Source information: Source: RMDB library OK3TST, as collected in RNAgym. Chemical mapping of a 207-nucleotide RNA with 2A3 and DMS. For DMS, 3,165 sequencing reads were counted. The RNA was probed in 150 mM KOAc, 10 mM MgCl2 and 150 mM bicine (pH 8.5) at 24 C.
RNA sequence: GGGAACGACUCGAGUAGAGUCGAAAAUCUUUAGAUGUGGCAGAUGCUCCAAUGAGUUAAAGAGUGGUAAGUCAAUCCAAAUCUCCUUUUCCUUUGAACCAUUCUUGUUACUCUGAUGAGCGUAUACUAUAUUUAUUCAAUACACUCAUCAAAUAUACAUUUAGUAAAAUUUCGAUUUUACUAAAUGAAAAGAAACAACAACAACAAC
Reactivity to 2A3 in 0.01 (KOAc 150mM, MgCl2 10mM, bicine 150mM(pH8.5), 24C), signal-to-noise 4, nucleotides 027 to 156: u030c010u050u130u070a070g010a070u060g020u020g040g000c030a020g050a140u070g030c010u000c040c010a090a160u140g010a000g030u030u080a030a010a000g020a000g010u010g030g000u040a060a080g070u060c030a030a050u040c030c040a050a060a120u080c110u150c060c000u080u040u080u120c020c000u060u060u080g020a010a020c000c000a010u020u000c000u010u040g060u110u060a020c020u020c050u040g010a010u020g000a000g020c000g000u000a000u000a020c020u010a060u040a140u300u180u100a170u070u160c030a020a020u020a030c000a000c030u030c000a000u100c010a000a060a050u300a020u300a090
Reactivity to DMS in 0.01 (KOAc 150mM, MgCl2 10mM, bicine 150mM(pH8.5), 24C), signal-to-noise 2, nucleotides 027 to 156: u000c030u000u000u010a060g000a080u000g030u000g020g000c020a130g000a150u000g030c020u010c020c050a090a120u000g010a080g020u000u000a080a040a030g000a060g000u010g000g010u000a080a170g000u000c070a010a070u000c050c000a040a060a110u010c090u000c090c060u000u010u010u010c000c040u000u000u010g030a070a110c020c010a010u000u000c000u000u000g000u010u000a060c040u000c030u000g000a130u010g000a010g010c030g000u000a000u000a160c040u000a110u000a130u050u000u010a120u020u000c020a110a100u000a020c010a040c010u000c000a050u000c010a030a070a090u000a180u000a230

2A3 adducts were read by reverse transcription with SuperScript II with manganese.